About this RNA: This 207-nucleotide RNA was probed chemically with 2A3. Values cover nucleotides 27 to 156. It was measured as part of the RMDB library OK3TST. For 2A3 the reverse transcriptase was SuperScript II with manganese. For 2A3, 839 sequencing reads were counted.
RNA sequence: GGGAACGACUCGAGUAGAGUCGAAAAGAUCAAGCUCGAGAACCCCUGGCUGUGGACCACGGAGUUCCAGGAGGAGGUGCGGACGAUGCUGACCGAGGCCUGCGAGCUGGAGGUUGCCUACGGCCGCGAGACCAUGCCCCGGGGGAUGCUCGGCCUCAUUGUCUUGGUAGUUCGCUACCAAGACAAUAAAAGAAACAACAACAACAAC
Reactivity to 2A3 in 0.01 (KOAc 150mM, MgCl2 10mM, bicine 150mM(pH8.5), 24C), signal-to-noise 2, nucleotides 027 to 156: g030a040u130c070a050a010g000c040u120c220g020a020g020a130a170c000c000c000c010u020g050g000c040u080g030u250g060g040a070c040c080a160c260g170g050a240g000u030u050c010c000a030g080g040a060g040g060a030g030g060u050g070c030g000g040a030c040g000a030u090g000c120u090g000a020c000c000g000a000g000g080c040c040u200g080c150g030a120g030c020u020g040g230a080g000g020u010u010g010c010c030u110a140c010g010g010c020c000g000c020g020a100g020a020c010c020a030u250g020c040c000c030c000g030g030g000g030g000a010u160g050c010u000c010g020g000c010c010u090c020